An RNA of 207 nucleotides, treated with DMS and 2A3 and read out base by base. Reactivities are given for positions 27 through 156. Reactivities are rounded to 0.1 and cut off at 0 and 3. For DMS, 3,191 sequencing reads were counted. DMS adducts were read by reverse transcription with MarathonRT. For 2A3, 5,292 sequencing reads were counted.

[RMDB]
RNA sequence: GGGAACGACUCGAGUAGAGUCGAAAACCUACUCAAUACGUCCUUGUCGUACAGAACGGUAACAUGUUUUCCGAACAUCCGCGCUUGGGUAUACGAGUAUACACCUUACCCAACCCUCGCCAACGGGAGUGCAUCCACGAGUUCGCUCGUGGAUGAAGGAAUAGACGAGAUUCGUCUCGUCUAUUCCAAAAGAAACAACAACAACAAC
Reactivity to DMS in 0.01 (KOAc 150mM, MgCl2 10mM, bicine 150mM(pH8.5), 24C), signal-to-noise 2, nucleotides 027 to 156: c040c020u000a060c040u000c010a100a160u000a070c040g000u010c040c010u000u020g000u010c030g010u000a190c110a080g020a150a130c040g010g010u000a060a120c110a160u010g000u000u000u000u000c040c010g020a080a100c040a100u010c000c010g020c020g010c010u010u000g000g010g040u000a030u000a060c080g020a100g050u010a100u000a160c120a090c060c030u000u000a090c010c020c020a090a090c030c020c040u000c110g000c070c050a080a090c070g000g020g000a030g000u010g040c040a020u000c000c000a040c020g020a010g020u000u000c300g030c000u000c000g050u010g010g000a000u010g020a040a070
Reactivity to 2A3 in 0.01 (KOAc 150mM, MgCl2 10mM, bicine 150mM(pH8.5), 24C), signal-to-noise 6, nucleotides 027 to 156: c000c000u010a030c030u040c020a030a090u050a100c030g080u060c010c020u040u060g120u180c040g020u070a060c040a160g070a130a040c040g050g000u070a070a030c060a140u170g060u060u030u030u050c020c030g030a070a020c030a100u050c060c040g010c000g010c060u020u010g020g050g000u050a040u030a060c090g020a020g070u010a000u050a030c090a070c020c050u090u150a060c020c030c000a020a060c020c010c010u030c020g070c040c020a050a060c060g010g030g010a040g030u100g010c010a000u000c000c000a000c010g000a000g020u060u070c150g050c110u000c000g000u010g000g000a000u000g000a000a010